[RMDB]
RNA sequence: GGGAACGACUCGAGUAGAGUCGAAAAUCAGGACUCAAAGUCUCUUUAGAGAAGAUGAAACUGUGAUCCGCUGAAUCUUUAUAGGUCAUGUAGAGAAUCGCAUCCAAAACUUUAGUCCCAGCAGCAACGGGGCGUAAGUUUUCGAACUUACGCCCCGAAAAGAAACAACAACAACAAC
Reactivity to 2A3 in 0.01 (KOAc 150mM, MgCl2 10mM, bicine 150mM(pH8.5), 24C), signal-to-noise 2, nucleotides 027 to 126: u090c050a040g000g030a090c090u040c120a030a030a020g050u010c000u010c020u100u200u130a190g000a000g080a140a000g010a070u110g120a100a050a030c030u010g030u040g080a000u000c000c020g010c000u000g080a050a050u000c100u000u290u060a180u280a130g050g040u090c020a000u080g110u090a060g010a000g000a140a050u070c000g000c020a080u030c000c020a050a050a030a050c000u070u070u060a000g020u010c050c000c000a020g020c020a030g000c000a060a020

Description:
Structure probing data (2A3) for a 177-nucleotide construct. The data come from the RNA Mapping Database (RMDB), library OK1LIB. Reactivities are given for positions 27 through 126. The 2A3 profile rests on 476 reads. Conditions: 150 mM KOAc, 10 mM MgCl2 and 150 mM bicine (pH 8.5), 24 C. For 2A3 the reverse transcriptase was SuperScript II with manganese.